Structure probing data (2A3) for a 207-nucleotide construct. The RNA was probed in 150 mM KOAc, 10 mM MgCl2 and 150 mM bicine (pH 8.5) at 24 C.
[RMDB]
RNA sequence: GGGAACGACUCGAGUAGAGUCGAAAAGGGAAUGGUGGCUUACCCCGUUAUCAAAUGAUUACCGACCAAUAAUUGGCGAAACUCGUUUCGCGUUGGCUGCCUAAUUCAAGGAAUUAGCGUGCCUUCAAAGACAUCAAGAAGUUCGCUUCUUGAUGAAGAUCUGCAGCUAGUUCGCUAGCUGCAGAUCAAAAGAAACAACAACAACAAC
Reactivity to 2A3 in 0.01 (KOAc 150mM, MgCl2 10mM, bicine 150mM(pH8.5), 24C), signal-to-noise 1, nucleotides 027 to 156: g080g000g000a050a140u040g030g020u000g000g100c060u050u100a080c000c030c010c000g080u070u000a060u100c140a100a190a150u160g060a050u080u000a020c000c040g060a080c020c040a080a000u200a130a160u110u210g080g000c010g030a070a030a000c040u050c200g060u000u000u020c010g000c010g000u000u000g000g020c040u100g050c020c000u000a000a010u030u000c080a200a000g180g030a070a010u000u000a060g080c150g030u030g000c000c000u030u020c080a130a170a000g050a020c000a010u000c000a000a000g000a010a000g010u010u170c170g120c100u000u030c000u000u000g000a000u000g000a010a000